The record gives the reactivity of an RNA of 207 nucleotides to 2A3.

[RMDB]
RNA sequence: GGGAACGACUCGAGUAGAGUCGAAAAGCAACACUUUCGAAUUGCGGGGACGUCCUGAGAGCUCGGUUCUACCAACCAGCAGAGAAAUCUAGCCGGGGCUGAUGUUAACAGCAUCGGAGGGUAAGAAUGAAUCGAGAUUGGAUGAUCCGCAGCCAACCACUUCUAGUCCGUUCGCGGACUAGAAGUGAAAAGAAACAACAACAACAAC
Reactivity to 2A3 in 0.01 (KOAc 150mM, MgCl2 10mM, bicine 150mM(pH8.5), 24C), signal-to-noise 2, nucleotides 027 to 156: g080c050a050a060c030a070c120u150u210u160c080g060a180a120u110u030g000c010g010g010g020g040a070c040g010u020c020c040u110g130a120g010a050g160c000u000c000g000g010u000u000c000u020a020c010c010a000a010c000c000a010g000c010a000g010a000g010a030a110a040u000c000u030a070g000c000c000g020g000g030g000c010u010g000a000u000g040u210u060a090a060c050a100g000c000a020u000c000g030g000a100g090g050g050u020a000a020g030a090a000u120g000a010a000u010c020g000a000g000a050u040u170g010g000a000u010g000a030u030c000c020g000c010a000g000c000c010a030a030c040
The reactions ran in a buffer of 150 mM KOAc, 10 mM MgCl2 and 150 mM bicine (pH 8.5), at 24 C.
High 2A3 reactivity points to a flexible backbone, as in loops and unpaired stretches.